RNA sequence: GGGAACGACUCGAGUAGAGUCGAAAAGGUGAGCGGGCAUCUUCGCUCUGUUUUCAGCCAUAAAUUGCAGCGUAUGCUCAAUGACCCACAUGUCGAUACUCGACGAUAAACCAAAUUCGUGCGCGAAGCCACCACCUAAUUUCGAUUAGGUGGUGGCAAAAGAAACAACAACAACAAC
Reactivity to 2A3 in 0.01 (KOAc 150mM, MgCl2 10mM, bicine 150mM(pH8.5), 24C), signal-to-noise 2, nucleotides 027 to 126: g030g010u060g010a030g020c040g010g000g000c000a040u010c040u070u010c030g010c000u000c020u010g040u000u040u000u040c040a050g110c000c020a040u110a120a070a040u050u040g060c080a000g000c000g010u030a040u080g000c010u010c040a030a080u080g080a050c010c040c000a040c020a060u140g000u010c000g000a020u030a100c030u020c010g000a000c000g040a070u100a120a060a060c010c020a010a000a140u130u050c030g030u080g070c080g000c000g070a030a000
Reactivity to DMS in 0.01 (KOAc 150mM, MgCl2 10mM, bicine 150mM(pH8.5), 24C), signal-to-noise 3, nucleotides 027 to 126: g010g030u000g000a060g010c300g020g010g030c100a030u000c190u000u010c060g030c010u020c020u000g000u000u000u010u010c130a140g030c150c120a070u000a010a080a030u000u010g000c140a030g010c010g040u000a050u000g010c010u000c010a060a110u000g010a090c080c010c040a090c180a110u000g010u000c010g010a190u010a060c130u000c010g020a040c020g000a110u000a010a100a140c060c040a020a090a170u010u000c020g000u000g020c140g040c020g000a070a110